Overview:
An RNA of 207 nucleotides, treated with DMS and 2A3 and read out base by base. Source: RMDB library OK3TST, as collected in RNAgym. Conditions: 150 mM KOAc, 10 mM MgCl2 and 150 mM bicine (pH 8.5), 24 C. For DMS, 1,825 sequencing reads were counted. For 2A3 the reverse transcriptase was SuperScript II with manganese.

RNA sequence: GGGAACGACUCGAGUAGAGUCGAAAAACAACAGAUAGCUGGAACCAGCGUAGAAUUCUACGCAUAUCCAUAGCGAAUGGUACCUGUAAAGAAAAUAACUGUGGAUGUACAAGUACCAACAGCCGCGGAUGCCAUGGUGAUGUCAAUCACAUAUGCAAUUUUAAAUCCUCUUCGGAGGAUUUAAAAUAAAAGAAACAACAACAACAAC
Reactivity to DMS in 0.01 (KOAc 150mM, MgCl2 10mM, bicine 150mM(pH8.5), 24C), signal-to-noise 1, nucleotides 027 to 156: a190c060a050a030c030a100g030a150u030a060g030c020u010g010g020a130a080c020c050a170g020c000g100u000a020g050a230a180u020u010c020u010a000c030g000c020a120u010a080u010c010c010a100u020a040g020c000g040a160a130u010g010g000u000a010c030c030u000g000u000a060a090a070g000a120a080a090a140u000a080a200c140u000g000u010g010g030a180u000g030u000a040c010a040a010g010u000a000c010c010a030a070c170a160g030c010c000g060c080g020g010a050u000g030c070c020a040u030g010g030u000g020a050u010g010u000c160a080a100u000c010a030c030a080u000a000u000g000c040a070
Reactivity to 2A3 in 0.01 (KOAc 150mM, MgCl2 10mM, bicine 150mM(pH8.5), 24C), signal-to-noise 2, nucleotides 027 to 156: a000c060a030a010c030a030g110a130u090a030g030c030u000g000g030a080a140c060c010a020g000c000g000u010a010g040a110a300u300u070c010u030a030c010g000c010a000u030a030u040c010c000a040u110a030g000c000g000a030a010u020g000g010u040a020c000c000u000g030u130a060a110a040g090a040a140a030a070u180a130a040c050u120g020u080g070g110a040u050g010u020a000c000a040a130g000u010a030c000c020a000a070c030a100g020c010c030g020c030g050g020a020u010g060c070c030a050u050g010g000u000g000a040u040g180u140c010a030a100u050c000a060c010a030u130a010u220g000c030a040